[RMDB]
RNA sequence: GGGAACGACUCGAGUAGAGUCGAAAACGUCGACGAUGCGGCGAUCGCGAACGGCGUCGCGCACACGGCGCUCUACGACGAAGCGGUCGCGCUCGGAGGGGCACGACGCGGCGAGUGAAGCGGCGCACAUGCGAGGCUCAUUCGUGAGCCUCGCAUGAAAAGAAACAACAACAACAAC
Reactivity to 2A3 in 0.01 (KOAc 150mM, MgCl2 10mM, bicine 150mM(pH8.5), 24C), signal-to-noise 2, nucleotides 027 to 126: c020g120u020c010g000a100c040g030a030u220g060c060g070g010c010g090a020u050c040g000c000g040a150a050c030g050g000c000g000u020c010g000c020g110c000a050c000a020c080g200g040c040g030c050u000c060u120a080c060g200a020c010g030a060a010g040c000g030g010u050c050g000c000g000c030u000c010g000g040a050g020g000g000g000c030a000c030g090a030c020g050c020g170g000c010g010a010g050u110g050a150a010g010c020g060g000c010g020c000a040
Reactivity to DMS in 0.01 (KOAc 150mM, MgCl2 10mM, bicine 150mM(pH8.5), 24C), signal-to-noise 2, nucleotides 027 to 126: c100g000u020c060g040a090c070g020a080u000g020c030g030g010c020g020a050u000c000g020c000g020a130a150c140g000g000c010g000u040c300g010c040g030c080a020c170a160c100g030g010c000g000c000u000c090u020a050c130g010a110c080g000a140a210g020c010g000g010u000c020g020c010g030c000u000c020g000g020a150g020g010g010g000c040a070c030g000a070c030g020c010g020g000c030g000a120g020u010g000a160a110g030c060g000g000c020g000c080a170